[RMDB]
RNA sequence: GGGAACGACUCGAGUAGAGUCGAAAAUCCCCCCACAACGUUUCGUUCUUGUUGGAUUGGUCAUUUUCAAAUAUUCCCCUUUUAUAUGCCCGUAAAAGACAAUAUACGUUAUAACAACGUUUUAUAAAUGUCUUUAUAAUUUCGAUUAUAAAGACAUAAAAGAAACAACAACAACAAC
Reactivity to 2A3 in 0.01 (KOAc 150mM, MgCl2 10mM, bicine 150mM(pH8.5), 24C), signal-to-noise 5, nucleotides 027 to 126: u020c010c000c000c000c030c000a060c040a070a090c030g010u000u050u090c020g000u030u040c020u040u050g070u040u070g030g050a090u020u060g030g020u040c040a040u060u020u050u100c060a050a130a040u130a100u080u050c000c000c000c000u050u070u040u010a150u030a020u120g070c020c010c000g010u040a050a080a040a010g060a020c070a100a010u110a010u030a120c010g020u040u050a150u090a250a070c110a030a000c020g000u050u000u090u070a110u040a050a250
Reactivity to DMS in 0.01 (KOAc 150mM, MgCl2 10mM, bicine 150mM(pH8.5), 24C), signal-to-noise 5, nucleotides 027 to 126: u010c000c000c000c050c020c010a060c110a090a090c050g020u000u000u020c020g010u010u010c040u000u010g010u000u000g000g000a090u010u000g020g010u030c050a050u010u010u010u010c050a070a090a090u020a170u000u000c010c010c010c040u000u010u020u000a060u010a090u020g000c010c020c020g000u020a030a020a060a040g010a110c130a070a050u020a060u020a020c030g000u000u010a090u040a060a130c160a040a030c030g010u010u020u000u020a060u020a070a090
Structure probing data (2A3 and DMS) for a 177-nucleotide construct.
The reactions ran in a buffer of 150 mM KOAc, 10 mM MgCl2 and 150 mM bicine (pH 8.5), at 24 C.
Values cover nucleotides 27 to 126.
For DMS the reverse transcriptase was MarathonRT.